Record summary
Conditions: 150 mM KOAc, 10 mM MgCl2 and 150 mM bicine (pH 8.5), 24 C. The record gives the reactivity of an RNA of 177 nucleotides to 2A3 and DMS. For 2A3 the reverse transcriptase was SuperScript II with manganese. Source: RMDB library M2PK50, as collected in RNAgym.
[RMDB]
RNA sequence: GGGAACGACUCGAGUAGAGUCGAAAAAGUCUACUUUUCGAAGUAGACUGUGCUCCCACUUGAUCGAGGUCUCACCGUGUCAUUGCCCACGAGACUCGGGCGUAAUAGAUUGGUUCGCCAAUCUAAACAUCUCCAUCACCUUCGGGUGAUGGAGAUGAAAAGAAACAACAACAACAAC
Reactivity to 2A3 in 0.01 (KOAc 150mM, MgCl2 10mM, bicine 150mM(pH8.5), 24C), signal-to-noise 1, nucleotides 027 to 126: a010g000u000c000u010a000c000u010u080u020u230c290g060a020a010g000u020a010g000a000c000u010g020u050g010c030u010c030c000c000a070c040u070u240g080a130u100c050g000a070g020g140u040c010u000c030a090c080c050g030u030g020u060c100a190u030u210g070c040c010c030a060c030g000a000g010a030c020u010c000g030g020g000c040g000u060a080a090u040a130g040a020u010u020g010g040u020u060c150g030c060c000a000a010u000c010u000a020a050a000
Reactivity to DMS in 0.01 (KOAc 150mM, MgCl2 10mM, bicine 150mM(pH8.5), 24C), signal-to-noise 2, nucleotides 027 to 126: a020g020u000c000u000a010c000u000u000u010u010c170g020a000a010g010u000a000g000a030c000u000g000u000g020c160u000c000c010c010a130c180u000u000g010a040u010c040g040a030g000g010u000c010u000c060a220c190c100g010u010g010u000c050a100u010u000g010c050c040c010a120c070g000a080g000a060c030u000c020g000g000g000c080g040u010a070a130u010a010g010a010u000u000g000g000u000u000c250g040c020c010a000a000u000c000u000a010a080a230